RNA sequence: GGGAACGACUCGAGUAGAGUCGAAAACGAGAUUCGUCCACGUCACCAUGAGUUAAAAUUUAACUCUCAGUAAAUUUUAACUCAUGAGUGAAUCUGCGAGUUAAAUUUUAACUCAGGGUGACGUGGAUAUAGAAGUCUUUUUCGAAAGACUUCUAUAAAAAGAAACAACAACAACAAC
Reactivity to 2A3 in 0.01 (KOAc 150mM, MgCl2 10mM, bicine 150mM(pH8.5), 24C), signal-to-noise 1, nucleotides 027 to 126: c020g030a030g000a110u110u120c050g020u000c030c000a000c000g000u000c000a000c000c000a030u000g000a000g010u000u010a000a000a000a020u000u010u000a000a010c000u010c000u020c000a000g020u100a030a130a200u090u160u050u130a080a030c000u050c040a030u170g010a000g000u010g000a010a030u040c010u000g010c010g030a010g000u000u000a000a010a000u000u000u000u000a000a000c000u000c000a000g000g010g000u000g000a000c010g000u000g000g000a000
Reactivity to DMS in 0.01 (KOAc 150mM, MgCl2 10mM, bicine 150mM(pH8.5), 24C), signal-to-noise 4, nucleotides 027 to 126: c070g000a160g020a150u010u010c080g010u000c000c000a000c010g000u000c000a010c000c000a040u000g000a030g000u000u000a000a010a020a010u010u000u000a010a010c000u000c000u010c010a010g010u010a050a130a100u020u010u040u040a120a080c090u010c150a080u030g020a040g020u000g000a100a060u010c000u000g000c150g000a010g000u010u000a000a010a010u000u000u000u000a010a010c000u000c000a020g000g010g010u000g000a000c010g010u000g000g000a000